[RMDB]
This 207-nucleotide RNA was probed chemically with DMS and 2A3.
High 2A3 reactivity points to a flexible backbone, as in loops and unpaired stretches.
Reactivities are given for positions 27 through 156.
Source: RMDB library OK3TST, as collected in RNAgym.
RNA sequence: GGGAACGACUCGAGUAGAGUCGAAAAGAAUUUCUGGAUUAACUGAACACACACACACACACACACACCCUUUUGAAGCAUCAACAGUAAUUCUGAGUUCUUAGGGACAAUGCAGAUUAAAUCCACAAUAAGAAAGACAACUAUGGCCAGGUGUGGAUAGGGUCAUAUCAUUCGUGAUAUGACCCUAAAAAGAAACAACAACAACAAC
Reactivity to DMS in 0.01 (KOAc 150mM, MgCl2 10mM, bicine 150mM(pH8.5), 24C), signal-to-noise 1, nucleotides 027 to 156: g020a220a060u010u000u010c040u020g020g000a180u000u000a080a130c030u000g020a090a090c050a090c040a040c010a020c070a060c030a070c030a060c000a000c020a060c040a010c040a070c000c030c000u030u010u000u000g010a130a080g000c010a040u010c040a100a090c030a000g000u010a030a080u000u000c020u010g020a170g030u000u000c020u020u000a080g040g010g020a070c070a030a090u010g030c010a040g000a080u000u010a040a060a060u000c010c000a020c030a040a100u020a040a080g020a100a020a120g000a120c040a030a060c110u010a020u000g000g020c010c040a100g040g040u020g050u020g020g010a150
Reactivity to 2A3 in 0.01 (KOAc 150mM, MgCl2 10mM, bicine 150mM(pH8.5), 24C), signal-to-noise 2, nucleotides 027 to 156: g010a030a060u080u100u080c050u050g030g030a040u130u100a110a100c030u070g080a180a000c070a000c010a000c000a010c020a000c000a000c080a010c020a000c020a010c000a000c010a040c030c050c020u030u050u050u090g070a070a010g060c050a080u040c040a020a090c010a050g020u140a040a080u190u020c050u040g000a010g100u070u020c020u020u060a020g010g010g040a000c070a030a130u110g010c010a020g010a090u050u110a050a110a010u030c040c010a000c000a010a070u100a090a010g080a070a030a010g040a050c030a070a000c060u110a110u120g040g010c030c020a040g000g030u020g000u020g020g010a020
The reactions ran in a buffer of 150 mM KOAc, 10 mM MgCl2 and 150 mM bicine (pH 8.5), at 24 C.